RNA sequence: GGGAACGACUCGAGUAGAGUCGAAAAUCUGCGUCUCAAAGGGCCCUGCCCCUUAACAGCAUCACCCUUGUGCUUAAGUUCCAGGCUUUGAAUGUUGGAGGGACACACACAUUCAAACCAUAGCACAAAGACAGGAGAGUUCUGGGGUGAGGACAGGGACUAUGGUACCCUUCGGGGUACCAUAGUCAAAAGAAACAACAACAACAAC
Reactivity to 2A3 in 0.01 (KOAc 150mM, MgCl2 10mM, bicine 150mM(pH8.5), 24C), signal-to-noise 1, nucleotides 027 to 156: u090c090u110g080c060g070u000c030u030c080a070a100a050g000g010g000c000c020c000u030g040c010c000c000c000u010u000a010a010c000a000g130c030a110u040c030a060c000c030c000u000u020g000u000g050c000u070u170a190a090g010u270u080c100c070a090g080g000c120u030u000u030g000a030a030u020g010u100u090g160g110a150g060g130g060a000c040a000c000a000c000a000c000a070u010u000c000a000a000a000c000c000a140u120a010g000c000a010c010a000a060a010g080a010c100a040g060g140a100g000a000g060u020u020c000u070g000g010g020g010u040g160a040g000g000a000c020a020g200g040